[RMDB]
RNA sequence: GGGAACGACUCGAGUAGAGUCGAAAACUGCCUGCGCAAGCCCCUUCCGCCAUUCCAUUACAUGAUCGCUUCCUUCGGCGGGAGCGAGGUGCCUUGUGCGUCAUAUCGCGUAUUCGGAUCGGACGCAGCAUAUGGACGUAUUCGUACGUCCAUAUGCAAAAGAAACAACAACAACAAC
Reactivity to 2A3 in 0.01 (KOAc 150mM, MgCl2 10mM, bicine 150mM(pH8.5), 24C), signal-to-noise 4, nucleotides 027 to 126: c010u040g030c000c030u090g000c050g000c030a070a090g000c010c000c010c000u010u000c010c010g010c010c010a070u100u030c060c010a040u070u200a110c070a100u150g060a100u140c040g000c040u040u020c010c000u070u140c090g060g000c000g000g000g010a000g000c050g010a060g000g010u040g040c010c020u100u070g030u030g040c000g010u020c010a050u040a020u110c040g000c020g150u090a160u080u170c040g030g020a030u020c010g010g020a010c020g020c050a020
Reactivity to DMS in 0.01 (KOAc 150mM, MgCl2 10mM, bicine 150mM(pH8.5), 24C), signal-to-noise 4, nucleotides 027 to 126: c150u000g010c060c030u010g010c050g010c070a060a080g010c040c020c020c030u000u000c010c010g010c060c030a090u020u000c040c040a100u020u010a100c120a090u010g000a060u000c040g000c020u000u000c010c020u010u010c220g010g000c090g010g000g000a020g020c090g020a040g000g020u010g000c090c030u010u000g010u000g010c000g020u000c040a070u010a090u000c050g000c030g030u000a110u010u010c040g010g010a050u000c070g000g000a050c040g010c040a100
The record gives the reactivity of an RNA of 177 nucleotides to 2A3 and DMS. 2A3 adducts were read by reverse transcription with SuperScript II with manganese. Conditions: 150 mM KOAc, 10 mM MgCl2 and 150 mM bicine (pH 8.5), 24 C.